[RMDB]
Source information:
Chemical mapping of a 177-nucleotide RNA with DMS and 2A3. DMS adducts were read by reverse transcription with MarathonRT. Source: RMDB library OK2TRN, as collected in RNAgym.
RNA sequence: GGGAACGACUCGAGUAGAGUCGAAAAUGACACCCAUUUGGGUGGAGAGGAUUUCGACAACCGCCUUGUCGAUUUCUGCAUCCAGGACUUUCAAGAGGAAGAACUAGGGGUAAAGGACCUCUCGGGCCACGACCAUAAGAUUCGUCUUAUGGUCGUGAAAAGAAACAACAACAACAAC
Reactivity to DMS in 0.01 (KOAc 150mM, MgCl2 10mM, bicine 150mM(pH8.5), 24C), signal-to-noise 6, nucleotides 027 to 126: u020g010a240c070a050c000c000c010a300u000u010u010g010g010g030u000g020g030a080g020a150g000g000a100u000u000u000c000g020a010c000a030a100c150c200g000c140c130u000u000g010u000c000g000a030u010u000u000c010u000g000c250a070u000c000c000a070g010g000a130c060u000u010u010c050a130a160g010a140g000g010a050a050g010a050a150c040u000a060g020g000g000g000u000a060a170a110g020g000a090c020c010u000c020u000c020g000g010g000c120
Reactivity to 2A3 in 0.01 (KOAc 150mM, MgCl2 10mM, bicine 150mM(pH8.5), 24C), signal-to-noise 3, nucleotides 027 to 126: u080g010a010c000a040c020c030c010a050u220u140u230g010g010g000u030g040g000a050g000a000g050g050a090u020u070u010c010g010a010c040a070a060c090c080g090c070c050u020u020g000u010c010g000a010u000u010u000c010u030g040c010a030u000c000c010a030g050g040a040c050u060u060u050c130a180a110g100a090g170g030a050a010g000a090a030c040u080a130g000g050g000g030u080a090a130a040g100g000a020c010c000u000c000u010c040g040g020g000c020